The record gives the reactivity of an RNA of 207 nucleotides to 2A3. For 2A3, 1,653 sequencing reads were counted. The reactions ran in a buffer of 150 mM KOAc, 10 mM MgCl2 and 150 mM bicine (pH 8.5), at 24 C.
RNA sequence: GGGAACGACUCGAGUAGAGUCGAAAAAGCGAUGAUAUGUCAUCGCAACGAUUGCCUGAUCGUAAAACAGGAGACGGCCGUGGCCGCGACCACGUAAAAAAGCGUAACGUGGUCUACGGACCACGAAAAAAGCGCGGAACGUUCGCGUUCCGCGCAACUAAGUUCACAAGUUCGCUUGUGAACUUAGAAAAGAAACAACAACAACAAC
Reactivity to 2A3 in 0.01 (KOAc 150mM, MgCl2 10mM, bicine 150mM(pH8.5), 24C), signal-to-noise 2, nucleotides 027 to 156: a000g000c020g000a000u010g010a010u070a120u300g200u110c000a000u000c000g000c000a000a010c000g010a010u010u020g020c000c000u000g010a000u020c030g090u190a000a000a050a030c010a010g020g030a010g060a020c160g070g060c090c010g000u000g000g010c030c000g000c020g000a010c000c010a010c000g030u030a040a070a030a040a000a000g060c030g060u080a080a010c010g000u000g000g000u000c010u040a060c120g050g020a070c000c010a020c000g040a010a000a000a000a000a020g000c000g000c020g010g000a010a000c000g020u100u120c190g020c000g080u000u010c000c000g010c010g000c000a000a000